[RMDB]
RNA sequence: GGGAACGACUCGAGUAGAGUCGAAAAAUUUGGACGCCAGAACCAUGUUUGUUCAAAUCUUCGGUCCGCAAGGAGAGAAGCUCUUUGGCAAACACCUUCCUUUCAACUGGGGUGCGCUGAAAAGUUCCCAUCCGUCUUACUUCGGUAAGACGGAUGGAAAAGAAACAACAACAACAAC
Reactivity to 2A3 in 0.01 (KOAc 150mM, MgCl2 10mM, bicine 150mM(pH8.5), 24C), signal-to-noise 3, nucleotides 027 to 126: a000u110u110u040g030g010a040c010g060c030c030a020g070a030a010c030c010a030u050g010u000u000u020g060u120u230c000a080a020a300u300c020u020u000c020g260g060u000c020c010g000c010a070a010g020g010a060g000a000g000a020a000g020c000u000c020u010u000u010g020g000c000a000a000a000c000a010c000c020u030u060c020c010u080u050u080c080a160a110c060u060g000g000g000g040u060g020c060g010c020u020g020a000a030a050a050g040u030u010c010
Reactivity to DMS in 0.01 (KOAc 150mM, MgCl2 10mM, bicine 150mM(pH8.5), 24C), signal-to-noise 1, nucleotides 027 to 126: a050u040u000u000g040g000a050c030g010c010c100a080g000a200a070c060c090a070u000g000u000u000u000g000u000u040c000a000a010a020u030c000u020u010c010g030g000u000c030c000g000c260a060a190g000g040a000g000a160g010a090a070g000c000u000c000u010u000u000g000g000c030a000a000a000c020a080c200c080u020u010c010c030u000u050u030c160a040a020c010u070g000g000g030g030u000g000c000g000c060u000g000a010a040a050a170g000u000u000c000
Overview
This 177-nucleotide RNA was probed chemically with 2A3 and DMS. Source: RMDB library RFM100, as collected in RNAgym. Values cover nucleotides 27 to 126. For DMS, 1,495 sequencing reads were counted. Conditions: 150 mM KOAc, 10 mM MgCl2 and 150 mM bicine (pH 8.5), 24 C.